RNA sequence: GGGAACGACUCGAGUAGAGUCGAAAACAGGGGAACUCCCUCCCCUAGCCAAGGGAAGCCCUGAGGGACUGUGCCAUGAGGGACAGUGCUAUCUGGCCCAGAUACUACACAUUUCCUACAGUCUUUGCAGCCGGCAGACCAGGAGAUUCCCUUGGGACGGAAAAUACUGAUUCGUCAGUAUUUUCCGAAAAGAAACAACAACAACAAC
Reactivity to DMS in 0.01 (KOAc 150mM, MgCl2 10mM, bicine 150mM(pH8.5), 24C), signal-to-noise 2, nucleotides 027 to 156: c090a040g010g010g000g020a080a100c050u010c000c000c060u000c020c010c000c030u010a130g000c010c020a070a020g020g030g030a110a060g030c020c020c020u020g000a060g020g000g010a000c090u010g000u010g010c060c060a190u010g010a280g030g020g000a010c040a060g010u000g050c140u000a060u000c010u000g020g000c010c000c000a150g000a230u000a080c020u010a020c020a040c020a080u000u000u000c010c000u020a150c060a100g010u000c020u010u010u000g030c030a220g020c110c080g020g030c050a110g000a040c030c010a130g000g030a080g010a110u010u000c000c010c030u010u010g030g020g020a170
Reactivity to 2A3 in 0.01 (KOAc 150mM, MgCl2 10mM, bicine 150mM(pH8.5), 24C), signal-to-noise 7, nucleotides 027 to 156: c080a000g000g000g000g020a040a080c050u090c020c000c010u000c000c000c000c000u010a050g110c000c000a000a000g020g000g020a040a070g090c010c000c000u020g010a040g000g010g010a010c010u010g000u020g040c100c140a140u120g060a110g010g010g000a000c010a000g030u130g160c100u180a160u230c000u010g020g000c000c000c010a040g040a120u170a090c050u110a010c030a000c000a020u010u010u040c000c010u110a170c080a070g000u010c010u100u200u190g050c030a080g190c110c080g160g000c020a000g000a010c010c000a000g000g010a110g010a070u000u000c000c000c000u000u000g010g000g010a020

Description: This 207-nucleotide RNA was probed chemically with DMS and 2A3. The data come from the RNA Mapping Database (RMDB), library OK3TST. For 2A3 the reverse transcriptase was SuperScript II with manganese.